[RMDB]
RNA sequence: GGGAACGACUCGAGUAGAGUCGAAAAAUGUACGCCUGACGCCUGAACGCCAGUUUGUGGGCAACCACCUGCGGGUUGUUCGCUUCCGGAUGAGCAACCCUGGCAGCAUCACCCGCAGCCUCCGCGACCCAACUAUAUAAUUCGUUAUAUAGUUGGGAAAAGAAACAACAACAACAAC
Reactivity to DMS in 0.01 (KOAc 150mM, MgCl2 10mM, bicine 150mM(pH8.5), 24C), signal-to-noise 8, nucleotides 027 to 126: a080u030g020u010a060c100g000c030c010u020g010a070c190g000c020c010u020g000a040a070c080g010c020c020a050g010u010u010u010g030u000g000g000g020c200a070a120c040c030a020c060c010u000g000c020g000g010g000u010u020g010u000u000c120g020c030u000u010c040c030g000g000a100u010g000a140g010c170a110a080c120c020c000u010g010g010c040a030g000c040a040u010c040a060c020c000c010g010c010a030g000c050c030u010c030c030g010c050g000a190
Reactivity to 2A3 in 0.01 (KOAc 150mM, MgCl2 10mM, bicine 150mM(pH8.5), 24C), signal-to-noise 9, nucleotides 027 to 126: a000u140g040u100a030c060g030c010c010u030g030a020c030g020c010c010u040g030a090a020c030g020c020c000a020g020u030u090u070g050u060g010g010g010c020a030a050c010c000a020c000c010u010g000c020g000g010g000u060u170g020u050u090c060g010c000u040u010c020c010g080g030a100u100g070a080g100c050a040a100c000c000c020u040g040g000c010a000g000c000a010u030c010a010c000c000c010g000c010a010g010c000c010u040c020c010g050c020g040a070